Chemical mapping of a 177-nucleotide RNA with DMS.

RNA sequence: GGGAACGACUCGAGUAGAGUCGAAAAUACCGCGUCUUCGGACGCGGUAAGAUCCCGUCGGAAAACCUGAGAGACGGAGAUGAACAGACUCAAGCUACGCAAUGACUGCCGGAUUCGUCCGGCAGAACUUGUCAAGGACGUUCGCGUCCUUGACAAGAAAAGAAACAACAACAACAAC
Reactivity to DMS in 0.01 (KOAc 150mM, MgCl2 10mM, bicine 150mM(pH8.5), 24C), signal-to-noise 1, nucleotides 027 to 126: u010a020c000c030g000c000g030u000c000u010u000c190g030g010a000c000g050c000g000g000u000a010a030g000a110u000c030c000c040g060u000c110g000g090a060a030a070a070c050c070u000g030a100g020a140g020a060c090g010g050a110g000a040u010g010a080a130c120a100g010a130c040u030c030a070a110g000c020u010a060c200g030c210a010a040u000g000a290c000u010g000c000c000g030g040a040u000u040c190g010u000c000c000g000g000c000a000g000a000a050

Annotation
For DMS the reverse transcriptase was MarathonRT. The data come from the RNA Mapping Database (RMDB), library M2PK50. The RNA was probed in 150 mM KOAc, 10 mM MgCl2 and 150 mM bicine (pH 8.5) at 24 C. The DMS profile rests on 571 reads.